[RMDB]
RNA sequence: GGGAACGACUCGAGUAGAGUCGAAAAGAAGCAGUCCUUAUUGUGUGUGAUGUUUAGUCAUCGCACUGUUCCUACGGGCUGCCAACGUAGGCCCAAUGUGCCGAGAGGCACUAGAAGUACGGCUUAUUAUGACGCAUCGCCGUACCAACGAUGCUGAAAUUAGCCAUUUAUUCGUAAAUGGCUAAUUAAAAGAAACAACAACAACAAC
Reactivity to DMS in 0.01 (KOAc 150mM, MgCl2 10mM, bicine 150mM(pH8.5), 24C), signal-to-noise 5, nucleotides 027 to 156: g020a110a060g000c000a040g010u000c010c010u010u000a080u010u010g030u000g020u000g040u000g010a010u000g020u000u010u010a210g020u000c010a010u000c010g000c010a010c010u000g010u010u000c040c050u000a120c160g000g010g020c010u000g000c020c060a040a070c130g010u000a050g010g020c010c000c030a110a130u010g020u000g010c000c010g020a290g000a300g030g010c000a010c010u010a090g000a100a110g000u000a080c080g010g010c010u000u000a070u000u000a140u000g020a190c120g020c000a030u000c030g000c000c040g010u000a120c080c010a050a030c000g000a030u000g020c010u000g010a150
Reactivity to 2A3 in 0.01 (KOAc 150mM, MgCl2 10mM, bicine 150mM(pH8.5), 24C), signal-to-noise 8, nucleotides 027 to 156: g150a040a010g000c000a000g000u010c010c020u080u090a190u270u220g120u040g000u010g010u010g030a020u010g120u040u180u230a280g120u200c000a000u010c010g000c000a000c010u020g070u050u100c020c020u030a040c020g000g010g000c000u000g000c000c010a060a020c060g060u060a030g050g000c000c010c010a010a050u080g000u000g000c000c000g020a020g020a050g010g000c000a010c000u020a020g090a220a010g060u070a030c020g000g000c020u030u020a060u120u100a130u250g080a030c080g010c030a020u040c030g010c030c020g040u020a040c000c000a040a020c030g030a020u060g010c020u050g020a010